[RMDB]
RNA sequence: GGGAACGACUCGAGUAGAGUCGAAAAUGACGUCCUACAUAUUAGGGCAGGCAGAGCCAUAUGAAUGGGCAUCGAGUGAUAGGUUUAUGAGGCGCAUCAAUACAAUCAUGCAGGGCAAGACCAAUGGCGAUUUAUAAGUAUUCGUACUUAUAAAUCGAAAAGAAACAACAACAACAAC
Reactivity to 2A3 in 0.01 (KOAc 150mM, MgCl2 10mM, bicine 150mM(pH8.5), 24C), signal-to-noise 9, nucleotides 027 to 126: u110g030a020c040g030u020c000c010u030a030c020a040u250a070u140u170a080g020g020g000c010a020g040g040c030a020g030a030g080c020c010a040u080a040u150g170a170a040u080g010g020g000c010a040u040c050g040a020g030u070g030a050u060a110g070g060u050u090u060a100u130g040a040g040g020c030g000c030a020u040c030a030a050u110a160c040a020a050u090c030a030u100g030c020a030g020g020g000c020a030a030g040a060c010c000a030a040u080g100g010
Reactivity to DMS in 0.01 (KOAc 150mM, MgCl2 10mM, bicine 150mM(pH8.5), 24C), signal-to-noise 9, nucleotides 027 to 126: u010g010a120c110g010u000c000c010u000a140c130a070u010a090u010u010a060g010g010g010c020a060g000g010c090a080g010a120g000c030c030a080u010a100u010g010a110a080u010g010g000g000c020a050u010c040g010a090g010u010g010a070u010a060g010g010u000u000u010a050u020g010a090g000g000c080g010c040a030u000c070a050a080u020a070c170a060a060u010c090a040u010g000c030a060g000g000g010c040a040a060g010a100c050c040a050a070u010g010g010

The data come from the RNA Mapping Database (RMDB), libraries RFM100 and RFMREP. Structure probing data (2A3 and DMS) for a 177-nucleotide construct. The RNA was probed in 150 mM KOAc, 10 mM MgCl2 and 150 mM bicine (pH 8.5) at 24 C.